[RMDB]
RNA sequence: GGGAACGACUCGAGUAGAGUCGAAAAUUGGUUUUUGAUGCCGUUCGGUUUCCAAAUCACGCAUCAACACUCUGUCACAUGUGCAACCGUUAGAGUUAGCAUGACCUUCAGGUCAACCGAGGUUAUAAUGUGCACACCUUUUCGAAGGUGUGCACAUAAAAGAAACAACAACAACAAC
Reactivity to DMS in 0.01 (KOAc 150mM, MgCl2 10mM, bicine 150mM(pH8.5), 24C), signal-to-noise 1, nucleotides 027 to 126: u020u000g000g010u000u000u000u060u000g000a000u000g010c090c060g030u000u000c150g010g070u000u000u010c150c150a140a100a060u020c000a070c150g000c010a010u000c010a000a030c300a150c000u000c030u000g000u010c070a060c100a080u000g010u000g010c050a030a050c050c030g030u000u000a070g020a100g020u000u020a170g020c000a050u000g020a050c030c050u010u000c200a190g010g000u010c090a010a060c030c010g000a050g020g000u000u010a050u020a050